[RMDB]
This 177-nucleotide RNA was probed chemically with DMS and 2A3. High 2A3 reactivity points to a flexible backbone, as in loops and unpaired stretches. The 2A3 profile rests on 2,366 reads. Source: RMDB library TTRDEL, as collected in RNAgym. For DMS the reverse transcriptase was MarathonRT.

RNA sequence: GGGAACGACUCGAGUAGAGUCGAAAAGAUAUGGAUACUUCGAUAAGCUGGUGUCGGAAACGACAUGCAGCUUUUGACGAAGGUCCUAAGUCAAACUUAGCGUCCUGCUUCGGCAGGACGCUAAGAACUUAAAUCGUCAGUUCGCUGACGAUUUAAGAAAAGAAACAACAACAACAAC
Reactivity to DMS in 0.01 (KOAc 150mM, MgCl2 10mM, bicine 150mM(pH8.5), 24C), signal-to-noise 3, nucleotides 027 to 126: g010a040u010a300u010g000g010a010u000a110c010u000u000c000g020a180u010a010a010g010c000u010g000g020u000g010u000c000g010g010a140a070a210c010g000a000c000a010u000g010c010a010g000c000u000u000u010u000g010a190c100g000a010a010g000g000u000c000c000u000a040a110g000u000c050a090a090a170c010u000u000a000g010c000g010u000c000c000u000g010c000u000u010c180g020g030c000a000g000g000a010c010g000c000u000a000a000g000a070a160
Reactivity to 2A3 in 0.01 (KOAc 150mM, MgCl2 10mM, bicine 150mM(pH8.5), 24C), signal-to-noise 1, nucleotides 027 to 126: g010a000u070a030u170g010g000a040u170a300c000u010u000c000g050a080u060a180a010g000c000u000g010g000u010g020u020c000g010g040a080a030a040c020g000a000c000a000u080g200c010a010g000c020u020u010u000u020g020a040c000g010a010a000g020g020u000c000c020u000a100a020g030u020c030a060a080a170c030u010u000a000g000c020g020u000c010c000u000g030c030u060u060c120g110g000c000a000g000g000a030c000g010c020u000a000a000g000a000a000